[RMDB]
RNA sequence: GGGAACGACUCGAGUAGAGUCGAAAAGAUAUGGAGGGUGAGUAGCAACAGCGUGUGUUCGGAAACGAACAUUACGACAUGCUACCACCCUCCUAAGUCAAAAGGACAUCACUUCGGUGAUGUCCAACCUGUUACAGGGGUUCGCCCCUGUAACAGGAAAAGAAACAACAACAACAAC
Reactivity to DMS in 0.01 (KOAc 150mM, MgCl2 10mM, bicine 150mM(pH8.5), 24C), signal-to-noise 1, nucleotides 027 to 126: g020a000u000a050u010g020g030a040g000g010g010u000g010a080g030u000a000g000c000a090a050c250a040g030c000g000u000g030u000g010u000u020c000g020g000a000a030a010c000g010a010a010c000a010u000u010a000c000g020a020c070a300u010g060c000u000a000c000c000a000c000c000c000u010c000c000u000a000a040g000u000c020a100a090a160a130g020g000a020c000a000u000c000a000c000u000u000c210g000g000u000g000a020u000g010u000c000c000a020a010
Reactivity to 2A3 in 0.01 (KOAc 150mM, MgCl2 10mM, bicine 150mM(pH8.5), 24C), signal-to-noise 1, nucleotides 027 to 126: g000a000u000a000u030g010g000a010g020g000g060u010g010a220g030u030a000g050c210a190a220c160a300g010c000g020u010g000u010g030u000u010c010g020g000a000a000a000c000g020a000a000c000a000u060u270a010c000g020a030c040a140u300g020c000u000a000c000c000a000c010c010c000u010c010c000u010a000a000g000u000c000a010a000a030a060g000g000a000c000a000u000c000a000c040u090u190c300g120g000u000g000a010u000g010u000c020c000a000a000